[RMDB]
RNA sequence: GGGAACGACUCGAGUAGAGUCGAAAAGGGGUCUAAACCGAUCACUUGGAUUUAGAAAUGAGGUACAGCUGAAGCCUCCACGGCUGUACUACCCACCAUUUCUUGUCAGUGAUCGAUUUAGACGGAGGCACCCAAAAGACUUGGUUCGCCAAGUCAACUGCAUGCAAGAGUUCGCUCUUGCAUGCAGAAAAGAAACAACAACAACAAC
Reactivity to 2A3 in 0.01 (KOAc 150mM, MgCl2 10mM, bicine 150mM(pH8.5), 24C), signal-to-noise 2, nucleotides 027 to 156: g020g010g020g000u020c000u000a010a000a000c000c000g000a000u000c000a010c040u300u300g110g000a080u300u300u110a010g000a000a000a010u000g010a000g000g000u000a000c000a000g000c000u010g010a010a020g000c000c010u000c000c000a030c000g020g000c000u010g020u000a000c000u020a010c040c050c000a030c010c000a010u010u010u020c000u000u030g020u010c140a130g000u010g000a000u010c000g010a000u010u000u000a000g000a010c010g000g000a000g020g010c020a010c000c010c000a000a170a080a030g000a010c000u000u000g010g050u160u120c170g000c110c000a000a000g000u000c000a000a040